[RMDB]
RNA sequence: GGGAACGACUCGAGUAGAGUCGAAAAUUGUUGAAAUUUGGACAGAUGCAAAAGAUCAAAUUCAAGGUGAAUUGAUGCAAUCACUUGAUAAAACUAACCCAAUCUUCAUGAUGAGUGAUUCAGGUGCUAAUGCGUUACCUUUCGAGGUAACGCAUUAAAAAGAAACAACAACAACAAC
Reactivity to 2A3 in 0.01 (KOAc 150mM, MgCl2 10mM, bicine 150mM(pH8.5), 24C), signal-to-noise 2, nucleotides 027 to 126: u020u010g000u030u010g050a090a040a060u120u080u080g020g010a020c020a070g040a060u130g130c060a020a070a160a000g060a060u010c060a020a000a110u140u030c000a010a130g170g020u080g130a010a020u060u050g060a040u070g090c000a010a030u020c000a000c080u010u020g030a000u040a050a090a030a010c060u100a030a030c010c010c000a020a040u010c070u130u080c050a070u140g050a080u020g030a000g060u020g020a030u050u040c030a000g000g060u120g000c000
Reactivity to DMS in 0.01 (KOAc 150mM, MgCl2 10mM, bicine 150mM(pH8.5), 24C), signal-to-noise 3, nucleotides 027 to 126: u000u020g000u000u000g000a080a100a120u010u010u000g000g020a080c130a090g030a090u010g000c090a030a060a130a130g020a080u020c030a010a080a060u010u000c080a070a130g000g020u000g020a040a050u010u010g010a100u000g000c030a040a040u020c000a030c000u000u040g000a040u020a040a050a050a030c090u010a050a120c010c020c020a080a020u020c050u020u020c150a070u030g000a030u010g000a040g000u010g010a130u000u020c040a040g020g020u010g000c160

The data come from the RNA Mapping Database (RMDB), library OK1LIB. The record gives the reactivity of an RNA of 177 nucleotides to 2A3 and DMS. The reactions ran in a buffer of 150 mM KOAc, 10 mM MgCl2 and 150 mM bicine (pH 8.5), at 24 C.